[RMDB]
RNA sequence: GGGAACGACUCGAGUAGAGUCGAAAAAUACUGUAAGGCAUAAUAUUUACUGCUUUACCGGUUAUGUGCCUCCAGCAAGCAAUAAUAAAUACUUCGAGUAUUAUUCGAUUUCUGAUGCUAUGAAGUGUCCCAAAGUGGAAUUCGUUCCACUUUGGGAAAAAGAAACAACAACAACAAC
Reactivity to DMS in 0.01 (KOAc 150mM, MgCl2 10mM, bicine 150mM(pH8.5), 24C), signal-to-noise 1, nucleotides 027 to 126: a060u000a060c000u010g000u000a010a000g000g020c030a050u000a050a170u010a100u060u020u020a060c200u000g000c000u010u030u000a030c020c080g000g010u000u010a040u000g000u000g040c030c040u000c140c070a140g010c130a140a030g020c170a070a020u020a050a040u010a020a030a080u000a110c000u000u080c030g020a020g040u000a000u000u000a080u040u020c160g010a100u000u060u000c070u030g000a080u010g030c030u000a040u000g010a000a040g030u010g000
Reactivity to 2A3 in 0.01 (KOAc 150mM, MgCl2 10mM, bicine 150mM(pH8.5), 24C), signal-to-noise 2, nucleotides 027 to 126: a000u060a010c020u000g000u020a000a000g030g000c010a000u000a110a140u060a270u180u200u150a080c070u030g010c020u010u000u040a020c020c020g030g040u060u020a050u090g070u140g080c000c000u000c030c010a030g000c050a060a020g040c060a050a040u050a190a010u100a070a100a000u170a000c000u030u000c060g010a020g030u020a020u010u050a110u090u050c130g110a150u000u140u000c040u080g030a070u030g020c000u020a090u260g010a000a010g010u010g040